RNA sequence: GGGAACGACUCGAGUAGAGUCGAAAAACAGUGUGGAGGUCUCUGUCUAGUUUCGUGGGUGAUCACCGGUGCGACGGUUACACUUUCCGCUACAGGACCUGACCGGGAAUGCAAGUGCUCCCAGAGCAUCGGAACCGUACCUGGCCCUACGCAGGUGCACGGAUCAAUUUUUCGAAAUUGAUCCGUGAAAAGAAACAACAACAACAAC
Reactivity to DMS in 0.01 (KOAc 150mM, MgCl2 10mM, bicine 150mM(pH8.5), 24C), signal-to-noise 1, nucleotides 027 to 156: a010c060a050g000u010g030u000g000g000a020g010g010u000c070u000c070u000g010u000c020u000a110g030u000u000u010c070g080u000g000g030g000u000g000a140u000c120a050c040c020g030g010u030g000c060g030a150c120g040g020u140u000a070c020a030c070u000u020u010c090c050g010c050u000a060c060a050g010g020a070c010c030u010g030a070c070c040g010g020g000a280a050u000g020c150a040a050g000u000g000c030u000c020c060c070a120g010a300g000c000a040u010c010g020g000a080a190c000c020g020u000a090c060c020u010g020g000c010c020c010u010a070c050g000c080a080g000g040u000g020
Reactivity to 2A3 in 0.01 (KOAc 150mM, MgCl2 10mM, bicine 150mM(pH8.5), 24C), signal-to-noise 1, nucleotides 027 to 156: a000c090a030g030u060g010u080g070g090a050g000g020u020c000u010c000u110g070u000c060u070a070g070u010u110u140c140g000u090g020g030g000u060g060a130u050c010a030c050c000g000g000u040g030c110g010a070c050g030g000u000u070a030c010a000c000u030u040u090c000c010g060c090u140a060c010a040g090g000a060c000c020u030g050a030c000c010g020g000g050a060a060u140g030c050a050a020g000u010g080c010u030c030c030c030a030g000a000g060c020a000u010c020g000g040a030a040c000c040g010u020a030c000c030u010g040g010c000c000c020u020a030c060g020c040a000g050g050u020g020